[RMDB]
Chemical mapping of a 177-nucleotide RNA with 2A3 and DMS. For 2A3, 406 sequencing reads were counted. Conditions: 150 mM KOAc, 10 mM MgCl2 and 150 mM bicine (pH 8.5), 24 C. The DMS profile rests on 1,159 reads. DMS adducts were read by reverse transcription with MarathonRT.
RNA sequence: GGGAACGACUCGAGUAGAGUCGAAAAUAGGAAAGUACUAGGAGUUUGGGGUUCUCCCUACUUGUUUCCAGAAAUGCGAGGGGUCAGUACUGAAGGAUCACUUGGUACUGUGUUUUUAACAGCUGACGUAGGCAGCGCUUUUCGAAGCGCUGCCUACAAAAGAAACAACAACAACAAC
Reactivity to 2A3 in 0.01 (KOAc 150mM, MgCl2 10mM, bicine 150mM(pH8.5), 24C), signal-to-noise 2, nucleotides 027 to 126: u120a040g050g010a030a080a000g060u060a070c070u180a070g000g030a070g070u160u250u100g000g000g000g060u280u000c180u090c000c000c000u070a000c080u170u090g050u020u000u050c000c000a000g010a000a090a000u170g050c040g000a000g000g010g060g030u040c060a000g060u020a050c130u240g000a010a010g080g040a060u220c040a090c170u010u010g000g000u040a040c040u010g000u000g110u090u060u000u000u060a240a090c080a010g160c030u080g050a030c060
Reactivity to DMS in 0.01 (KOAc 150mM, MgCl2 10mM, bicine 150mM(pH8.5), 24C), signal-to-noise 1, nucleotides 027 to 126: u010a070g000g000a000a090a180g140u000a100c050u000a100g000g000a190g090u000u000u000g010g000g000g000u020u030c000u000c030c100c000u000a030c000u000u000g000u000u000u000c020c060a130g010a080a050a030u030g000c070g030a170g040g000g000g010u000c000a070g000u000a080c040u000g040a110a000g060g000a070u030c240a020c050u000u000g000g030u030a000c050u000g000u030g010u000u000u000u000u010a190a170c080a180g000c120u000g030a240c160